[RMDB]
RNA sequence: GGGAACGACUCGAGUAGAGUCGAAAAUAAGCCAAAGGGAUGUCCCGACCGGAGGCCGACAAUCCAGGGAACCGGAUGUCAUCACGUUGUUGCAGUAACAGAUGGCAUCUUAAAUCCGAUCUGCAAAAAAAGUCUUACACCUUCGGGUGUAAGACAACCAAUGAGCAUGGUUCGCCAUGCUCAUUGGAAAAGAAACAACAACAACAAC
Reactivity to DMS in 0.01 (KOAc 150mM, MgCl2 10mM, bicine 150mM(pH8.5), 24C), signal-to-noise 1, nucleotides 027 to 156: u000a120a090g090c010c030a000a300a250g000g010g000a130u000g000u000c020c020c020g020a130c000c010g060g000a300g000g000c010c050g020a080c050a070a070u010c010c020a110g030g000g040a100a140c100c050g000g010a030u000g000u000c020a060u000c040a300c220g050u020u000g000u000u000g000c010a090g000u010a080a070c000a020g000a050u000g000g000c050a020u000c050u000u000a050a060a160u000c080c010g000a110u000c040u000g030c000a000a000a060a060a060a100a160g020u000c010u000u000a000c000a020c010c020u010u000c300g110g000g070u000g030u000a000a000g000a000c040a020a100
Reactivity to 2A3 in 0.01 (KOAc 150mM, MgCl2 10mM, bicine 150mM(pH8.5), 24C), signal-to-noise 2, nucleotides 027 to 156: u100a020a010g000c030c000a000a030a000g020g000g000a000u010g020u000c010c000c000g000a000c000c000g000g000a020g010g000c010c000g030a030c030a110a110u070c070c100a030g010g000g010a040a000c040c040g000g000a010u010g000u010c000a000u000c020a010c190g030u040u020g110u090u010g000c000a000g020u060a020a030c010a060g010a000u000g010g000c000a000u000c010u000u010a020a020a020u120c100c010g040a110u050c020u030g010c040a000a060a000a000a000a060a040g000u000c000u010u000a000c000a000c000c010u050u120c270g100g000g000u000g000u000a000a000g000a000c000a000a000
Chemical mapping of a 207-nucleotide RNA with DMS and 2A3. Conditions: 150 mM KOAc, 10 mM MgCl2 and 150 mM bicine (pH 8.5), 24 C. DMS adducts were read by reverse transcription with MarathonRT. The DMS profile rests on 1,783 reads. The 2A3 profile rests on 1,650 reads. Source: RMDB library M2RFPK, as collected in RNAgym.